[RMDB]
RNA sequence: GGGAACGACUCGAGUAGAGUCGAAAAGAUAUGGACGCACUCAGGGAGAAGUGUCGGAAACGACCUUCGACGAUCUGACUGCGUCCUAAGUCGAGGCCAGAGAAAUGGUUCGCCAUUUCUCUGGCAAGAGAUGCUGUUAGUUCGCUAACAGCAUCUCAAAAGAAACAACAACAACAAC
Reactivity to 2A3 in 0.01 (KOAc 150mM, MgCl2 10mM, bicine 150mM(pH8.5), 24C), signal-to-noise 2, nucleotides 027 to 126: g010a000u040a030u120g010g000a000c000g010c010a000c000u000c010a000g020g050g020a030g010a010a000g070u100g010u300c010g010g020a070a040a000c000g000a010c000c020u020u020c000g040a060c020g020a030u020c000u010g000a010c020u000g000c000g000u010c000c000u000a000a000g010u000c020g040a140g130g060c000c000a000g000a000g000a010a000a000u020g010g040u070u120c300g050c110c000a000u000u000u010c000u000c000u000g000g000c000a000a000
Reactivity to DMS in 0.01 (KOAc 150mM, MgCl2 10mM, bicine 150mM(pH8.5), 24C), signal-to-noise 3, nucleotides 027 to 126: g000a040u010a300u010g010g000a000c000g010c000a000c100u000c010a020g020g020g010a070g000a030a020g020u010g040u000c010g000g010a060a050a210c010g000a010c000c020u000u000c000g010a060c210g000a030u010c000u000g000a000c090u000g020c000g000u010c000c000u010a000a040g010u000c010g010a160g000g020c000c020a010g010a010g000a000a000a000u000g010g020u010u010c290g040c000c000a000u000u000u000c000u000c000u000g000g010c010a000a000
Chemical mapping of a 177-nucleotide RNA with 2A3 and DMS. 2A3 is a SHAPE reagent: it acylates the 2'-hydroxyl of flexible nucleotides of all four kinds. DMS adducts were read by reverse transcription with MarathonRT.